[RMDB]
RNA sequence: GGGAACGACUCGAGUAGAGUCGAAAAUGCCAUUGCCAUCAUCGACAGGCGCUGACAGCGUCACCGCCACGCCAUUUGAAGUCAGCCCUUGUACUGGAUUGACGCUGCUAUCGAGCGCAAAACUCGAUCAUUUAAUCCAGUUCGCUGGAUUAAAUGAAAAAGAAACAACAACAACAAC
Reactivity to 2A3 in 0.01 (KOAc 150mM, MgCl2 10mM, bicine 150mM(pH8.5), 24C), signal-to-noise 6, nucleotides 027 to 126: u100g030c030c010a050u040u110g030c020c020a060u050c010a010u040c040g030a030c030a060g050g000c030g000c030u010g020a030c020a020g030c000g030u010c020a030c070c050g060c050c010a030c020g000c000c010a150u100u090u210g090a110a030g030u040c020a030g020c010c000c000u030u080g060u040a080c050u060g040g000a020u010u050g020a020c010g010c020u020g000c010u030a030u120c030g090a010g020c010g010c070a020a030a040a070c010u020c010g020a040
Reactivity to DMS in 0.01 (KOAc 150mM, MgCl2 10mM, bicine 150mM(pH8.5), 24C), signal-to-noise 9, nucleotides 027 to 126: u010g010c020c020a100u010u010g010c030c020a070u010c080a080u000c060g010a060c080a100g010g010c090g020c050u000g000a070c030a090g010c020g010u000c030a060c090c120g010c050c050a050c070g010c070c070a110u010u010u010g010a110a110g010u000c050a060g010c030c040c030u000u000g010u010a080c100u000g010g000a090u000u000g000a050c050g020c060u000g000c090u000a080u000c030g010a010g010c050g020c120a060a040a070a100c030u000c020g000a130